[RMDB]
RNA sequence: GGGAACGACUCGAGUAGAGUCGAAAAAGCAGGAGUACGCUCCUGCAUGGGUAGACGAAUUGACCCCAACUGAAGUUCAAUUCUAACGUUAAAAGGAGUUUUAUAUGACUGGACGUACGCGUCCAUAUGACGAUUUCAUUCUUCGGAAUGAAAUCAACCUUAAUCCUAUCUUCGGAUAGGAUUAAGGAAAAGAAACAACAACAACAAC
Reactivity to DMS in 0.01 (KOAc 150mM, MgCl2 10mM, bicine 150mM(pH8.5), 24C), signal-to-noise 2, nucleotides 027 to 156: a060g040c020a020g000g000a010g020u000a100c300g030c020u000c000c000u010g050c040a040u000g020g000g000u000a050g020a130c120g020a030a060u010u010g000a040c010c010c000c000a060a280c180u030g010a060a040g010u010u000c030a020a030u000u000c010u000a150a120c100g000u000u000a120a080a130a110g000g020a220g020u000u000u010u020a100u010a090u000g000a120c110u000g000g010a040c010g050u000a060c250g010c000g050u000c000c010a060u000a010u000g030a090c120g000a060u000u000u000c000a020u000u000c000u000u020c300g020g010a050a010u000g010a010a000a000u000c010a030a050
Reactivity to 2A3 in 0.01 (KOAc 150mM, MgCl2 10mM, bicine 150mM(pH8.5), 24C), signal-to-noise 5, nucleotides 027 to 156: a010g000c000a000g010g020a000g010u060a040c170g030c120u000c000c000u000g000c000a000u010g010g000g010u150a150g050a170c050g010a030a020u010u010g000a000c000c000c010c010a080a050c150u280g040a010a030g020u080u010c000a000a000u000u000c030u080a130a050c130g060u100u210a070a070a030a050g110g030a110g060u090u040u160u100a220u080a100u180g080a080c060u040g010g010a000c010g030u050a030c170g000c010g100u010c000c010a020u040a070u110g030a000c090g000a000u000u000u010c000a000u000u000c000u030u020c060g090g000a000a000u000g000a000a000a010u000c000a010a000